Notes
The data come from the RNA Mapping Database (RMDB), library 15KLIB. The record gives the reactivity of an RNA of 170 nucleotides to 2A3 and DMS.
[RMDB]
RNA sequence: GGGAACGACUCGAGUAGAGUCGAAAAAGGAGGGUUCACAUCCCCAACCCGCGGGCCGGCUACUCUUCUUUCCCUUCUCUCGUCUUCCUCGGUCAACCUCCUGAGUUCCUCUUCUUCCUCCCUGCUGCCCGAUUUCGCUUCGGCGAAAUCAAAAGAAACAACAACAACAAC
Reactivity to 2A3 in 0.01 (KOAc 150mM, MgCl2 10mM, bicine 150mM(pH8.5), 24C), signal-to-noise 5, nucleotides 027 to 129: a020g060g010a020g020g040g010u110u130c090a030c020a120u090c000c000c000c000a040a090c010c010c010g030c030g000g000g020c010c030g030g000c010u060a050c030u040c010u080u030c020u030u030u050c000c010c000u060u040c030u010c020u020c020g070u000c010u100u030c020c010u020c020g000g030u050c020a050a030c030c000u050c000c000u030g020a040g020u010u040c030c000u020c010u070u020c000u070u040c010c010u000c000c020c000u000g020c010u040g010c010c020c010
Reactivity to DMS in 0.01 (KOAc 150mM, MgCl2 10mM, bicine 150mM(pH8.5), 24C), signal-to-noise 7, nucleotides 027 to 129: a070g040g010a090g000g000g000u030u040c140a120c020a110u040c000c020c030c070a100a130c020c030c020g050c100g010g040g060c090c000g000g000c070u050a000c000u030c050u010u000c030u010u000u010c000c010c040u020u020c000u020c000u000c050g030u030c050u030u030c040c020u010c050g000g050u000c060a090a120c100c010u020c000c000u040g020a130g010u010u020c020c020u000c030u000u000c040u020u030c020c010u030c000c040c040u000g030c060u060g020c040c040c050
The DMS profile rests on 45,135 reads.